[RMDB]
RNA sequence: GGGAACGACUCGAGUAGAGUCGAAAAUAAGUCUAGUUCGCUAGACUUACUAUCGGGAAAACAGCCUCCCGGCUCGAUCACGCGGAUUCCGUCCAAGCGCUGCAACACACGUAUUCGUACGUGUGAAUGCUUCCGAAUAGUUCGCUAUUCGGAAGCAAAAAGAAACAACAACAACAAC
Reactivity to 2A3 in 0.01 (KOAc 150mM, MgCl2 10mM, bicine 150mM(pH8.5), 24C), signal-to-noise 1, nucleotides 027 to 126: u030a010a010g000u010c000u000a010g010u060u040c160g020c150u000a000g010a000c000u020u020a000c010u020a020u110c030g000g020g000a020a090a040a040c000a010g000c010c000u000c020c020c010g000g020c020u030c020g100a130u090c030a030c170g020c020g170g010a250u230u050c020c040g000u030c050c020a040a040g020c050g000c100u050g040c070a050a090c010a000c000a000c020g000u010a010u010u070c280g070u000a020c000g010u010g010u000g010a020a030
Reactivity to DMS in 0.01 (KOAc 150mM, MgCl2 10mM, bicine 150mM(pH8.5), 24C), signal-to-noise 2, nucleotides 027 to 126: u000a010a020g000u000c010u000a010g000u000u010c180g060c000u000a000g000a020c000u000u000a020c060u000a080u000c030g010g020g000a010a050a090a120c060a050g000c020c030u000c000c010c000g020g010c070u000c040g000a070u000c050a080c200g000c030g030g010a120u010u000c040c030g020u000c110c070a070a020g020c100g000c040u000g020c110a100a240c000a010c000a010c000g030u000a000u000u020c190g000u000a010c000g010u010g020u010g000a050a070